Source: RMDB library OK3TST, as collected in RNAgym. The record gives the reactivity of an RNA of 207 nucleotides to 2A3. Values cover nucleotides 27 to 156.
RNA sequence: GGGAACGACUCGAGUAGAGUCGAAAAUUGGAACAAUGCACGUUCUGAAAAGGUUAAAGAGUGGAAAGAGCUUCGUAACUAUAUCUAUGCUACGGACACUCGUACUACCUCUAACAACAAGUUGCCUUGGUCUAACUCUACAACUACCCCCAAGCUAGACGGUGGUUUUAUUCGUAAAACCACCGUCAAAAGAAACAACAACAACAAC
Reactivity to 2A3 in 0.01 (KOAc 150mM, MgCl2 10mM, bicine 150mM(pH8.5), 24C), signal-to-noise 1, nucleotides 027 to 156: u060u050g030g000a010a010c020a010a070u070g080c020a020c080g000u060u040c000u000g020a020a020a020a090g040g010u040u030a000a240a000g020a000g000u000g010g020a260a090a000g010a120g060c040u050u020c050g140u080a060a080c190u100a050u010a040u300c090u110a090u300g000c000u000a050c000g070g000a000c030a010c130u000c000g000u060a040c030u010a030c010c020u000c010u040a070a040c080a020a000c020a000a200g100u240u020g000c000c010u000u000g000g020u000c000u000a020a020c000u000c010u180a050c000a090a060c090u090a070c040c000c000c000c010a000a050g030c010u070a070